[RMDB]
RNA sequence: GGGAACGACUCGAGUAGAGUCGAAAAGAAAGAAAGAAAGUUCAUUGUUUAUCGGAAACUUUAAACUAUAACCAUUCAAGCUUUUCCAGAAGUUAGUUUGAAUAGAAAUUAAAAAGAAACUUCUGAAUGACCUUGGCACCGUUCGCGGUGCCAAGAACUAAGGUAAUUUGUUCGCAAAUUACCUUAGAAAAGAAACAACAACAACAAC
Reactivity to 2A3 in 0.01 (KOAc 150mM, MgCl2 10mM, bicine 150mM(pH8.5), 24C), signal-to-noise 1, nucleotides 027 to 156: g020a020a000a000g050a020a100a010g070a050a140a020g030u050u030c030a020u030u210g020u020u090u090a140u150c070g000g090a060a020a020c010u050u020u090a060a050a000c030u010a090u080a300a040c030c000a010u000u000c000a000a000g000c010u030u030u020u010c110c000a000g000a030a010g000u000u000a010g000u000u000u000g020a040a010u030a110g010a000a160a060u170u260a060a090a050a000a000g060a040a000a000c010u000u010c000u000g010a000a050u040g010a020c000c000u000u000g000g000c000a000c060c040g040u090u100c220g000c060g180g000u000g100c000c000a010a000g000a000a000